[RMDB]
RNA sequence: GGGAACGACUCGAGUAGAGUCGAAAAGUGGGUCGCAAAGCAGCGUAGGGCAUACCGAGGGUCAGAGCACCUCGUAAAUCCAACUGAAAAACUUUAGUCGCAAACGACGAAAACUACGCCCUGGCCGCUUAAGGUCCAGGACUCACACUAGCCUGUUAAUUGACAAUAACUUCGGUUAUUGUCAAUUAAAAGAAACAACAACAACAAC
Reactivity to 2A3 in 0.01 (KOAc 150mM, MgCl2 10mM, bicine 150mM(pH8.5), 24C), signal-to-noise 8, nucleotides 027 to 156: g010u010g000g010g010u020c030g040c170a090a100a050g020c020a010g010c030g040u050a000g000g030g000c030a050u090a120c070c000g000a010g010g000g000u050c050a010g010a010g070c060a040c010c000u000c000g060u100a040a040a020u010c010c020a030a030c050u100g050a050a040a030a070a090c050u180u200u140a090g000u010c020g040c190a160a150a100c080g040a000c020g040a020a030a030a040c050u100a040c040g010c000c020c000u000g010g000c000c000g020c050u170u140a110a080g020g000u050c020c010a000g000g030a000c000u010c010a010c000a020c040u040a030g040c000c000u020g020u060u020
Reactivity to DMS in 0.01 (KOAc 150mM, MgCl2 10mM, bicine 150mM(pH8.5), 24C), signal-to-noise 3, nucleotides 027 to 156: g040u000g010g000g020u000c010g000c090a110a140a090g030c040a050g020c020g000u010a050g010g060g040c020a160u010a080c170c020g010a070g010g010g020u000c030a240g000a240g040c130a090c020c000u000c000g000u010a010a090a110u010c000c030a050a130c070u000g000a030a030a070a070a120c150u000u000u000a070g010u000c000g000c070a080a070a180c040g000a010c010g000a020a030a020a120c050u000a060c040g030c000c010c000u000g000g020c020c000g020c080u000u000a060a080g000g000u000c030c030a070g000g010a050c020u000c020a020c020a090c150u000a120g000c070c030u000g000u000u010

Overview:
The data come from the RNA Mapping Database (RMDB), library ARCHII. This 207-nucleotide RNA was probed chemically with 2A3 and DMS. The RNA was probed in 150 mM KOAc, 10 mM MgCl2 and 150 mM bicine (pH 8.5) at 24 C. High DMS reactivity at an A or C suggests that its Watson-Crick edge is free.